An RNA of 177 nucleotides, treated with 2A3 and DMS and read out base by base. The DMS profile rests on 3,853 reads. The reactions ran in a buffer of 150 mM KOAc, 10 mM MgCl2 and 150 mM bicine (pH 8.5), at 24 C. For 2A3 the reverse transcriptase was SuperScript II with manganese.

[RMDB]
RNA sequence: GGGAACGACUCGAGUAGAGUCGAAAAGUUUUUGGAUUACAUCAAUAGUCGCAUGAGCAGAAGUAAACCGAACAAGAAUUAGUGCGGUAAUUCAAGUUCAAAGUUCACACUAUCGCAAUAAAUAUAAUACACUCAAAAUAUUCGUAUUUUGAGUGUAAAAAGAAACAACAACAACAAC
Reactivity to 2A3 in 0.01 (KOAc 150mM, MgCl2 10mM, bicine 150mM(pH8.5), 24C), signal-to-noise 2, nucleotides 027 to 126: g030u070u070u040u100u090g040g000a030u030u080a060c030a070u060c050a090a170u030a080g080u030c050g000c130a040u060g030a000g010c040a020g040a240a010g070u080a010a030a090c060c010g000a010a010c010a030a030g050a070a050u060u040a030g090u020g080c020g060g010u000a020a000u030u000c020a000a040g000u020u030c010a070a100a020g040u070u080c040a020c000a000c050u070a060u130c020g000c020a030a030u080a170a110a030u200a070u030a150a090
Reactivity to DMS in 0.01 (KOAc 150mM, MgCl2 10mM, bicine 150mM(pH8.5), 24C), signal-to-noise 4, nucleotides 027 to 126: g010u000u000u000u000u020g020g010a100u000u010a070c070a100u000c060a080a110u000a090g010u010c050g020c070a060u010g010a070g010c040a070g000a080a080g020u000a050a060a060c060c110g020a020a010c020a040a300g010a020a030u000u000a060g010u000g010c070g010g020u000a010a020u000u000c020a030a300g010u000u000c020a040a100a140g010u000u000c060a040c040a100c090u000a040u000c060g020c050a070a050u020a030a070a070u010a080u000a090a130